[RMDB]
RNA sequence: GGGAACGACUCGAGUAGAGUCGAAAACAGUGAAAGGCGAGGUCAGCGUCAGCAGCCCGCCGCUGAACGCAGGACAACGCCAAAGGUGGGCGGGAAAAGAUACAGGCUGAAGAUACAGCCAGUACAAACCAUAUACCCGGUUCGCCGGGUAUAUGGUAAAAGAAACAACAACAACAAC
Reactivity to DMS in 0.01 (KOAc 150mM, MgCl2 10mM, bicine 150mM(pH8.5), 24C), signal-to-noise 3, nucleotides 027 to 126: c080a140g000u030g020a100a230a080g030g020c000g000a110g030g020u000c020a050g000c010g000u000c010a020g030c000a090g030c010c030c020g000c010c040g030c010u000g010a060a040c000g000c010a120g000g040a010c050a040a030c080g000c000c030a030a050a090g000g020u010g010g000g000c090g010g000g000a080a020a100a070g010a150u000a020c000a040g010g050c020u010g000a160a140g010a230u110a110c010a020g020c000c000a070g020u000a020c080a100a070
Reactivity to 2A3 in 0.01 (KOAc 150mM, MgCl2 10mM, bicine 150mM(pH8.5), 24C), signal-to-noise 1, nucleotides 027 to 126: c020a070g040u120g180a140a070a040g000g010c040g020a070g000g290u020c000a010g000c010g000u010c010a000g000c000a000g000c000c000c010g000c000c000g000c020u000g040a070a030c020g020c020a040g070g070a030c010a300a060c130g040c000c050a010a010a000g110g010u140g000g000g000c080g040g000g000a020a080a000a000g100a030u060a030c030a030g000g000c000u010g000a050a020g010a050u100a100c010a010g020c000c000a000g000u030a020c000a000a100

The record gives the reactivity of an RNA of 177 nucleotides to DMS and 2A3. Reactivities are rounded to 0.1 and cut off at 0 and 3. Reactivities are given for positions 27 through 126. The data come from the RNA Mapping Database (RMDB), library OK1LIB. The reactions ran in a buffer of 150 mM KOAc, 10 mM MgCl2 and 150 mM bicine (pH 8.5), at 24 C. The DMS profile rests on 4,151 reads.